[RMDB]
About this RNA: Chemical mapping of a 177-nucleotide RNA with DMS and 2A3. Source: RMDB library TTRDEL, as collected in RNAgym. Values cover nucleotides 27 to 126. The reactions ran in a buffer of 150 mM KOAc, 10 mM MgCl2 and 150 mM bicine (pH 8.5), at 24 C.
RNA sequence: GGGAACGACUCGAGUAGAGUCGAAAAGAUAUGGAAUAGUGUAGACAUGAUAGGUCGGAAACGACCUUUCAACAGCUACCUAUUCCUAAGUCAAAGCAUUCCCCACACUUCGGUGUGGGGAAUGCAACUAUAUCAUAGGGUUCGCCCUAUGAUAUAGAAAAGAAACAACAACAACAAC
Reactivity to DMS in 0.01 (KOAc 150mM, MgCl2 10mM, bicine 150mM(pH8.5), 24C), signal-to-noise 5, nucleotides 027 to 126: g000a020u000a210u000g000g000a010a010u000a000g010u010g010u000a000g000a130c130a180u010g000a010u000a010g000g010u000c000g020g000a030a050a110c000g020a010c010c000u000u000u000c000a030a090c300a140g000c000u010a000c010c000u000a010u000u000c000c000u000a010a060g000u000c020a110a110a130g010c010a010u000u000c000c010c010c000a020c000a000c000u000u010c210g030g010u000g030u010g000g020g010g000a000a000u000g010c010a010a040
Reactivity to 2A3 in 0.01 (KOAc 150mM, MgCl2 10mM, bicine 150mM(pH8.5), 24C), signal-to-noise 4, nucleotides 027 to 126: g010a010u030a010u060g000g020a010a000u010a020g140u170g010u200a030g060a250c120a150u020g000a010u020a010g000g010u000c000g000g000a010a010a000c010g000a000c000c000u000u010u000c040a070a070c070a040g030c010u000a000c010c000u000a000u000u000c000c000u000a010a000g010u010c040a130a090a000g000c010a000u010u000c010c020c030c000a000c000a000c020u120u150c300g170g000u000g000u010g030g020g020g000a000a000u000g000c000a000a000
For DMS the reverse transcriptase was MarathonRT.